Conditions: 150 mM KOAc, 10 mM MgCl2 and 150 mM bicine (pH 8.5), 24 C. This 177-nucleotide RNA was probed chemically with DMS and 2A3. The DMS profile rests on 8,241 reads. Source: RMDB library OK2TST, as collected in RNAgym. High 2A3 reactivity points to a flexible backbone, as in loops and unpaired stretches.
RNA sequence: GGGAACGACUCGAGUAGAGUCGAAAAACGACUAUCGCAUUCGCGUGAAUUCGAUGAGGCGGACCUUAUGAAGAACUCGGAGUCCGUGGAGGAACUGGUUCGCAGGGAAAGCAAGCGAAUCCAGCAACGCUUUUAAAUAUUUCGAUAUUUAAAAGCGAAAAGAAACAACAACAACAAC
Reactivity to DMS in 0.01 (KOAc 150mM, MgCl2 10mM, bicine 150mM(pH8.5), 24C), signal-to-noise 7, nucleotides 027 to 126: a090c060g010a070c050u000a040u000c010g020c080a060u000u000c030g010c300g020u020g010a020a030u000u000c000g010a040u000g010a080g020g010c010g000g000a100c010c040u010u010a100u010g000a080a130g000a080a180c090u000c050g020g010a130g010u000c010c020g020u010g010g010a120g020g010a080a170c020u000g000g000u000u000c020g010c010a090g020g010g010a100a110a170g000c170a090a120g010c000g000a030a020u010c010c010a030g010c140a070a140
Reactivity to 2A3 in 0.01 (KOAc 150mM, MgCl2 10mM, bicine 150mM(pH8.5), 24C), signal-to-noise 5, nucleotides 027 to 126: a000c030g030a020c020u060a010u050c000g020c040a040u060u020c060g060c120g300u260g110a020a030u030u010c020g010a010u060g090a030g130g040c000g010g000a020c010c000u090u080a130u230g100a070a160g050a110a040c040u030c090g060g030a130g050u000c030c000g010u040g050g040a070g020g030a060a040c000u000g000g000u000u010c010g000c010a020g040g030g130a160a170a070g100c080a100a010g000c000g010a010a020u060c030c010a010g020c020a050a050